Structure probing data (DMS and 2A3) for a 177-nucleotide construct. The DMS profile rests on 4,940 reads.
[RMDB]
RNA sequence: GGGAACGACUCGAGUAGAGUCGAAAAGAUAUGGAAAUCUGAAGCAUCGAUCAAUUGAAGUGUGUAACAAGUAUUCGGAAACGAAUACCGCCCACACUUCAAUUGGGAGCUUCUGAUUUCCUAAGUCCGAUAGGGUAAGGUUCGCCUUACCCUAUCGAAAAGAAACAACAACAACAAC
Reactivity to DMS in 0.01 (KOAc 150mM, MgCl2 10mM, bicine 150mM(pH8.5), 24C), signal-to-noise 5, nucleotides 027 to 126: g010a120u000a300u020g010g000a000a000a010u000c000u010g010a010a010g040c000a300u000c210g000a110u010c020a000a020u000u000g000a010a000g010u000g010u000g000u010a090a110c230a230a090g000u000a010u000u010c000g010g000a120a110a220c020g000a020a000u000a000c010c050g000c300c170c000a000c000a000c000u000u000c000a000a000u000u000g000g000g000a020g020c010u000u000c010u000g010a010u000u000u000c000c000u000a020a100g010u010c050
Reactivity to 2A3 in 0.01 (KOAc 150mM, MgCl2 10mM, bicine 150mM(pH8.5), 24C), signal-to-noise 3, nucleotides 027 to 126: g020a030u160a030u260g000g010a000a000a010u030c020u050g010a020a000g000c030a260u300c080g170a120u110c030a020a010u000u020g000a000a000g010u020g010u000g050u280a180a110c100a250a060g000u000a020u010u000c000g030g030a130a080a060c010g000a000a000u010a010c010c000g040c010c000c000a000c000a010c010u000u000c000a000a000u000u000g000g010g010a010g000c010u010u000c000u010g000a010u000u000u000c000c000u000a100a010g060u030c070

For 2A3 the reverse transcriptase was SuperScript II with manganese.